[RMDB]
Record summary: This 207-nucleotide RNA was probed chemically with DMS and 2A3. For 2A3, 2,164 sequencing reads were counted. DMS adducts were read by reverse transcription with MarathonRT.
RNA sequence: GGGAACGACUCGAGUAGAGUCGAAAAUUCCAUUUGAGUAUCCUGAAAACGGGCUUUUCAGCAUGGAACGUACAUAUUAAAUAGUAGGAGUGCAUAGUGGCCCGUAUAGCAGGCAUUAACACUCCUGAAAACGUGAAAAGGUUCGCCUUUUCACGAACCGUAUUCCAUAGUUCGCUAUGGAAUACGGAAAAGAAACAACAACAACAAC
Reactivity to DMS in 0.01 (KOAc 150mM, MgCl2 10mM, bicine 150mM(pH8.5), 24C), signal-to-noise 1, nucleotides 027 to 156: u000u010c010c000a100u010u000u000g000a090g010u030a120u000c020c000u000g010a040a050a060a090c050g040g010g050c090u010u000u000u000c050a090g020c110a020u010g010g000a060a030c070g010u000a090c100a140u000a150u000u010a030a110a130u000a160g000u000a040g010g010a140g040u000g010c000a140u010a200g030u000g020g000c000c020c010g020u010a000u010a230g000c050a030g010g010c090a050u000u000a130a110c010a030c010u020c000c050u020g000a090a030a030a200c000g030u000g000a010a010a030a020g000g020u000u000c300g010c030c000u000u000u000u010c030a000c000g030a010a010
Reactivity to 2A3 in 0.01 (KOAc 150mM, MgCl2 10mM, bicine 150mM(pH8.5), 24C), signal-to-noise 3, nucleotides 027 to 156: u030u010c010c000a020u100u040u040g010a020g030u110a050u100c010c010u030g040a060a090a010a020c030g020g010g030c020u090u120u040u040c030a030g020c030a020u010g010g060a080a010c020g100u110a030c050a070u180a100u200u300a140a160a100u180a070g140u050a000g010g050a020g010u020g000c060a050u070a150g060u050g020g040c000c000c040g020u020a020u010a000g000c000a010g000g000c000a000u000u000a010a000c010a010c010u020c010c000u010g080a110a120a020a040c020g000u000g000a000a010a000a000g040g000u060u050c100g110c020c000u000u010u000u000c000a000c000g000a010a000